[RMDB]
RNA sequence: GGGAACGACUCGAGUAGAGUCGAAAAAUCAACGGCUUCACAUCGGUGUAUGUGGCCAUCGUGGUCUACUCCGUCAUUGGGUUCCGCGCCACACAGCGCUACGACGACUGCUUCAGCACGUGAGUGGAGCGUGACGUGCAUUCGUGCACGUCACGCUAAAAGAAACAACAACAACAAC
Reactivity to 2A3 in 0.01 (KOAc 150mM, MgCl2 10mM, bicine 150mM(pH8.5), 24C), signal-to-noise 2, nucleotides 027 to 126: a000u080c060a040a000c040g060g010c000u120u060c030a020c020a100u040c090g180g020u140g030u090a130u050g030u010g000g030c040c000a000u050c020g030u020g000g040u000c020u030a020c020u000c020c000g100u100c030a110u080u210g160g030g000u090u000c040c030g020c030g020c010c000a100c010a020c020a050g030c000g010c060u090a030c060g040a020c000g070a060c000u070g030c020u090u100c030a030g010c080a010c050g060u050g050a020g000u040g030g040
Reactivity to DMS in 0.01 (KOAc 150mM, MgCl2 10mM, bicine 150mM(pH8.5), 24C), signal-to-noise 2, nucleotides 027 to 126: a130u010c120a130a120c120g000g000c030u020u010c010a030c030a050u000c010g010g000u000g010u010a030u000g050u000g010g030c010c020a050u000c090g000u000g000g020u000c020u000a050c020u000c010c070g000u000c080a120u020u010g010g040g020u020u000c100c060g000c060g000c030c000a070c170a120c160a100g000c020g010c020u010a020c120g000a050c040g000a090c190u000g020c030u000u000c110a100g000c050a000c030g000u000g010a090g010u000g030g010

Chemical mapping of a 177-nucleotide RNA with 2A3 and DMS. For 2A3, 1,878 sequencing reads were counted. Conditions: 150 mM KOAc, 10 mM MgCl2 and 150 mM bicine (pH 8.5), 24 C.